Chemical mapping of a 207-nucleotide RNA with DMS and 2A3.
DMS adducts were read by reverse transcription with MarathonRT.
Source: RMDB library OK3TST, as collected in RNAgym.
For 2A3, 3,001 sequencing reads were counted.
2A3 is a SHAPE reagent: it acylates the 2'-hydroxyl of flexible nucleotides of all four kinds.
For 2A3 the reverse transcriptase was SuperScript II with manganese.
[RMDB]
RNA sequence: GGGAACGACUCGAGUAGAGUCGAAAAUUCGGUCCUCUGGAGCGGACCGUCUGCUCCGUCAGGAUGUGGAGGUCUCGCGCCCUCCUCUGCGCGUAUGUACAUCGAUACGGUUAUGUCGCCUUUGUGUCGGCGUUUGACACUUACACAUACCGGAUAAGCCGUAUUUAAUAUUCGUAUUAAAUACGGCAAAAGAAACAACAACAACAAC
Reactivity to DMS in 0.01 (KOAc 150mM, MgCl2 10mM, bicine 150mM(pH8.5), 24C), signal-to-noise 3, nucleotides 027 to 156: u000u000c020g020g000u000c000c000u000c050u000g020g020a080g040c300g040g020a170c090c070g010u000c020u010g000c020u000c020c020g000u010c110a060g030g000a040u000g040u000g010g010a100g020g010u000c040u010c070g020c050g010c080c010c030u000c030c020u000c050u000g010c050g040c040g000u000a060u000g010u000a070c060a090u000c090g020a260u000a090c080g030g020u010u000a040u000g020u010c060g010c010c040u000u000u010g010u000g040u000c040g000g030c060g050u000u000u000g020a040c020a020c020u010u010a040c030a030c000a040u000a060c010c010g000g000a050u010a080a300
Reactivity to 2A3 in 0.01 (KOAc 150mM, MgCl2 10mM, bicine 150mM(pH8.5), 24C), signal-to-noise 4, nucleotides 027 to 156: u050u010c020g030g020u030c030c020u060c120u250g110g040a080g030c020g000g020a050c040c000g030u020c010u020g050c050u010c030c010g080u080c080a040g000g020a020u020g010u020g020g000a020g000g010u000c000u000c050g010c000g000c000c000c010u010c000c030u000c010u010g080c100g010c020g010u140a040u080g010u010a040c040a130u070c070g120a180u100a300c160g010g000u090u010a010u030g050u030c000g020c030c020u050u050u020g150u050g010u080c000g010g000c050g010u010u010u020g040a040c090a040c240u010u270a020c000a000c000a010u080a300c000c010g000g000a050u070a090a070